[RMDB]
RNA sequence: GGGAACGACUCGAGUAGAGUCGAAAAAUAGACGAGACUAUUAGGGAAAAGUUGUGUCUAGGAUUAGAUAAGCCGGCGAUUGAUAUUGCUAAUAGAUGCGCUGAAAUUAAAACAAAAUUGAUCGUUGAGCAUGCCAAUAAUGUCGCUGCGGCAACGGGCAAAGUGAUUCCUUCGGGAAUCACUUUGCAAAAGAAACAACAACAACAAC
Reactivity to 2A3 in 0.01 (KOAc 150mM, MgCl2 10mM, bicine 150mM(pH8.5), 24C), signal-to-noise 1, nucleotides 027 to 156: a000u090a000g000a000c000g000a030g000a120c030u040a210u180u050a030g000g000g010a080a070a140a030g010u050u000g000u000g000u120c080u070a030g030g020a080u100u130a070g040a120u080a030a000g000c000c000g030g000c010g030a030u020u020g070a030u000a070u080u090g070c000u030a030a030u030a220g130a120u070g010c030g030c040u000g050a020a030a040u210u120a060a190a000a020c070a000a040a150a070u020u120g000a050u100c010g050u000u050g030a090g010c010a040u040g030c000c000a100a050u080a110a080u100g050u130c030g000c000u040g050c010g010g000c000a030a010c000g010g000
This 207-nucleotide RNA was probed chemically with 2A3. The reactions ran in a buffer of 150 mM KOAc, 10 mM MgCl2 and 150 mM bicine (pH 8.5), at 24 C. It was measured as part of the RMDB library OK3TST. The 2A3 profile rests on 342 reads. Reactivities are given for positions 27 through 156.